[RMDB]
RNA sequence: GGGAACGACUCGAGUAGAGUCGAAAACGCCCACCUUGAUGAUCGUCUACCUAAUGUAGGCGGUCGCCAGGUAAGGCGCACUCCACAUCGCGUCACCGUUCCGAUUGCCUCUUCAGGCCUUCGUCCGGUAACAACCGUUCAGUAUGAUCCCGCAGCACUAAUUAUAAUGCUUCGGCAUUAUAAUUAGAAAAGAAACAACAACAACAAC
Reactivity to 2A3 in 0.01 (KOAc 150mM, MgCl2 10mM, bicine 150mM(pH8.5), 24C), signal-to-noise 9, nucleotides 027 to 156: c020g030c010c000c000a020c000c000u170u120g030a250u050g000a000u170c000g010u000c000u000a020c040c060u260a290a070u300g000u000a000g000g000c000g000g010u000c000g000c000c020a000g000g000u030a040a090g000g000c020g000c050a030c030u030c020c010a030c010a120u080c030g010c020g050u040c040a010c040c010g040u090u040c020c030g040a040u030u060g010c000c000u090c050u160u190c130a030g010g000c000c000u030u050c010g040u000c030c010g000g040u050a080a040c040a040a030c020c010g050u090u080c050a060g040u060a100u120g060a080u030c010c020c020g010c060a030g050c020a020
Reactivity to DMS in 0.01 (KOAc 150mM, MgCl2 10mM, bicine 150mM(pH8.5), 24C), signal-to-noise 3, nucleotides 027 to 156: c000g000c000c000c030a050c060c000u010u010g030a030u000g000a010u000c000g020u000c000u010a010c010c090u000a180a100u000g020u000a010g020g010c000g020g040u000c010g040c000c000a010g000g030u000a130a040g010g040c000g010c010a090c060u010c020c020a060c040a100u000c060g020c100g010u000c020a100c040c020g000u000u010c050c020g010a090u000u010g030c010c010u010c080u010u010c080a080g040g000c010c020u000u000c030g010u000c090c020g010g010u000a070a080c060a080a090c030c020g020u000u000c040a080g010u010a070u010g000a140u000c010c010c000g020c050a110g000c100a260